The record gives the reactivity of an RNA of 177 nucleotides to DMS and 2A3.
DMS adducts were read by reverse transcription with MarathonRT.
Reactivities are given for positions 27 through 126.

[RMDB]
RNA sequence: GGGAACGACUCGAGUAGAGUCGAAAAAAAAUGAGUGCGUGGUAGCACAAACCAGACCAAUCUUGGGCACAUGGUCGCACAAGUACAGCUUCGCCUGUACAAAGCGAACAACAACAACAACAAGCAACGUUAUUAACGUGUUCGCACGUUAAUAACGAAAAGAAACAACAACAACAAC
Reactivity to DMS in 0.01 (KOAc 150mM, MgCl2 10mM, bicine 150mM(pH8.5), 24C), signal-to-noise 3, nucleotides 027 to 126: a030a070a010a090u000g000a170g040u010g000c060g010u000g000g010u010a140g010c030a000c040a020a070a080c020c010a120g000a090c030c030a050a050u010c140u000u000g020g000g010c050a070c150a120u010g000g010u000c030g030c020a040c110a070a160g000u000a010c030a020g000c040u000u000c220g020c210c000u010g010u000a030c050a050a060a100g010c010g000a020a030c010a010a030c000a010a000c020a030a020c040a000a020c100a140a100g000c220a050a110
Reactivity to 2A3 in 0.01 (KOAc 150mM, MgCl2 10mM, bicine 150mM(pH8.5), 24C), signal-to-noise 3, nucleotides 027 to 126: a000a000a000a020u140g000a020g010u010g010c040g010u060g040g070u130a020g000c010a010c010a020a010a020c010c010a000g090a040c030c000a030a140u120c070u100u090g030g030g000c060a060c010a200u090g070g020u040c010g020c020a070c000a230a000g010u000a010c000a000g000c040u110u170c100g030c070c010u000g000u020a010c000a050a040a000g020c000g020a010a020c020a020a010c030a010a000c000a000a020c010a020a000c000a020a020g070c000a050a050

Conditions: 150 mM KOAc, 10 mM MgCl2 and 150 mM bicine (pH 8.5), 24 C.